[RMDB]
RNA sequence: GGGAACGACUCGAGUAGAGUCGAAAAUUCGAAAGUCUGGCUGCGUCUCCGUCGAAUGGUUUUCGUACUUUUGAAUCGUGUUCUUCUCGACGAGAUCCUCCAAGUGCUCUUUGAAGUCCUGAAUCCACUUACCCGGGGGGAGUUCAGUCACGUGGAGGCAGAGAUGAUUAUUCGUAAUCAUCUCUGCAAAAGAAACAACAACAACAAC
Reactivity to 2A3 in 0.01 (KOAc 150mM, MgCl2 10mM, bicine 150mM(pH8.5), 24C), signal-to-noise 5, nucleotides 027 to 156: u050u030c010g020a030a000a000g030u050c080u100g060g030c040u080g030c070g060u050c060u060c160c040g070u070c020g060a080a110u120g080g010u070u040u050u060c060g000u070a060c070u060u090u070u130g100a080a050u040c050g020u020g060u220u010c000u060u020c010u000c010g040a050c010g010a010g020a070u020c010c000u000c000c020a070a020g030u020g020c050u040c040u100u150u110g060a050a040g090u060c010c000u030g040a070a100u070c030c020a080c070u130u110a130c030c010c070g000g000g010g000g010g000a010g000u020u030c010a000g030u020c020a020c020g030u030g000g010a020g030
Reactivity to DMS in 0.01 (KOAc 150mM, MgCl2 10mM, bicine 150mM(pH8.5), 24C), signal-to-noise 1, nucleotides 027 to 156: u000u000c040g000a040a050a070g000u000c040u010g020g010c020u010g030c060g020u000c000u010c030c070g000u000c020g000a070a090u000g020g030u000u000u020u000c040g020u000a070c040u000u000u030u000g040a050a060u010c030g040u020g030u010u000c050u000u000c030u010c040g010a160c050g020a190g010a090u000c020c010u020c010c020a040a090g010u000g030c070u010c050u000u000u000g020a090a110g030u010c000c000u000g000a060a150u000c020c040a060c040u000u010a120c060c010c040g020g020g020g020g030g020a060g040u010u000c020a080g020u000c000a040c050g000u000g000g000a070g030
Chemical mapping of a 207-nucleotide RNA with 2A3 and DMS. Source: RMDB library OK3TST, as collected in RNAgym. 2A3 adducts were read by reverse transcription with SuperScript II with manganese. The RNA was probed in 150 mM KOAc, 10 mM MgCl2 and 150 mM bicine (pH 8.5) at 24 C. The DMS profile rests on 4,085 reads.